[RMDB]
RNA sequence: GGGAACGACUCGAGUAGAGUCGAAAAAGGCAAGAUGUGUAAUGUUAUAUAACAUGGCAAGCCUUGGUUAUAUAAAUUACCCGACUUAUUCGCUUUCAGCUCAACGUGGCAUCUUGUCCUGCGGAGCCUUGGAUUUAUGAUUCGUCAUAAAUCCAAGAAAAGAAACAACAACAACAAC
Reactivity to 2A3 in 0.01 (KOAc 150mM, MgCl2 10mM, bicine 150mM(pH8.5), 24C), signal-to-noise 9, nucleotides 027 to 126: a000g020g000c010a010a010g020a040u050g050u010g020u060a020a010u080g060u300u000a010u000a000u000a010a010c010a010u030g050g000c120a170a070g070c020c000u010u040g050g000u010u000a000u000a000u000a010a020a010u010u010a010c000c000c060g050a050c090u140u160a110u220u130c080g070c150u070u140u120c070a040g000c010u020c040a100a250c080g030u050g030g000c000a060u000c000u020u030g030u050c000c010u030g010c010g030g010a010g000c010
Reactivity to DMS in 0.01 (KOAc 150mM, MgCl2 10mM, bicine 150mM(pH8.5), 24C), signal-to-noise 7, nucleotides 027 to 126: a030g000g010c010a030a010g000a030u000g010u010g010u000a010a010u000g010u010u000a010u000a000u000a010a010c000a020u000g000g020c070a130a210g010c010c000u000u000g010g010u010u000a000u000a000u000a010a030a020u000u000a020c010c080c110g010a090c220u010u020a080u020u020c100g010c090u000u000u010c110a120g010c030u000c040a070a140c070g010u000g000g010c040a050u000c020u000u000g000u010c010c010u000g010c080g010g000a040g000c050